[RMDB]
RNA sequence: GGGAACGACUCGAGUAGAGUCGAAAAGAUAUGGAUCUUGUUCGCUGAUGACCCAUGCAUAAGACUCUUAUAUAUCGGAAACGAUAUAUAAGAGUAUAACAUGGCAAGGCGAACCGGAUCCUAAGUCCACUAUUCUUCAGUUCGCUGAAGAAUAGUGAAAAGAAACAACAACAACAAC
Reactivity to 2A3 in 0.01 (KOAc 150mM, MgCl2 10mM, bicine 150mM(pH8.5), 24C), signal-to-noise 4, nucleotides 027 to 126: g030a000u060a020u110g000g010a010u010c010u010u020g010u020u010c020g000c010u040g030a300u080g030a120c030c000c000a000u020g010c030a160u180a300a190g230a180c010u000c000u010u000a000u000a000u000a010u010c000g010g010a000a040a040c010g000a000u000a010u010a000u000a010a000g000a000g000u000a000u000a010a000c000a000u010g020g010c040a090a290g000g000c000g010a010a000c000c000g000g000a000u000c000c000u000a040a000g010u000c010
Reactivity to DMS in 0.01 (KOAc 150mM, MgCl2 10mM, bicine 150mM(pH8.5), 24C), signal-to-noise 5, nucleotides 027 to 126: g000a060u000a230u010g000g000a010u000c000u000u000g010u000u000c000g030c000u010g010a080u010g000a080c300c010c000a000u000g010c160a130u010a180a190g010a040c010u000c000u000u000a000u000a010u000a000u000c000g010g000a090a040a170c010g010a000u000a000u000a010u000a000a010g000a020g010u010a010u000a130a140c010a010u000g000g010c020a050a100g000g000c000g000a000a010c000c040g000g000a010u000c000c000u000a010a110g000u000c020